[RMDB]
RNA sequence: GGGAACGACUCGAGUAGAGUCGAAAAGCACUAGAGGGCGUAACGGCUGGGUGUAACCCAACUCUAGGUGUGCUGAUUAGCGGGCUUGACUCCCUAACAAAUAGGCACUGGUGGUAAAAAGCAUCCCUGACCAUAUACAUCUUCGGAUGUAUAUGAAGGCAUGAAGUAUCUUCGGAUACUUCAUGCCAAAAGAAACAACAACAACAAC
Reactivity to 2A3 in 0.01 (KOAc 150mM, MgCl2 10mM, bicine 150mM(pH8.5), 24C), signal-to-noise 2, nucleotides 027 to 156: g020c010a000c040u000a000g010a020g050g020g020c010g020u060a040a020c020g120g000c010u020g000g000g010u030g100u040a050a040c000c000c000a000a030c000u000c000u030a030g070g050u050g020u030g000c040u040g010a280u010u020a000g020c070g010g020g030c030u060u080g050a200c010u000c000c000c000u050a060a000c010a040a050a060u160a080g030g000c030a020c040u020g040g070u030g070g050u150a060a090a000a000a000g010c010a050u050c000c000c000u030g020a030c000c030a010u000a000u000a000c000a000u000c000u030u100c110g060g000a000u000g000u000a000u000a000u000g010a060a030
Reactivity to DMS in 0.01 (KOAc 150mM, MgCl2 10mM, bicine 150mM(pH8.5), 24C), signal-to-noise 1, nucleotides 027 to 156: g020c010a020c010u000a090g010a130g000g020g040c030g010u010a110a060c140g030g000c000u010g020g050g050u020g030u000a100a300c000c020c020a030a060c020u000c040u010a170g010g020u000g030u000g020c030u000g000a130u000u000a030g020c120g050g030g030c050u000u010g030a120c040u000c020c000c050u000a060a070c060a040a050a050u000a120g020g020c020a080c050u000g010g000u000g000g010u000a070a020a040a090a110g010c040a150u000c000c030c000u000g010a110c100c010a000u000a030u020a040c010a000u010c020u010u000c280g010g000a000u000g010u010a010u020a000u000g020a060a130
Structure probing data (2A3 and DMS) for a 207-nucleotide construct. For DMS, 1,610 sequencing reads were counted. Reactivities are given for positions 27 through 156. For DMS the reverse transcriptase was MarathonRT.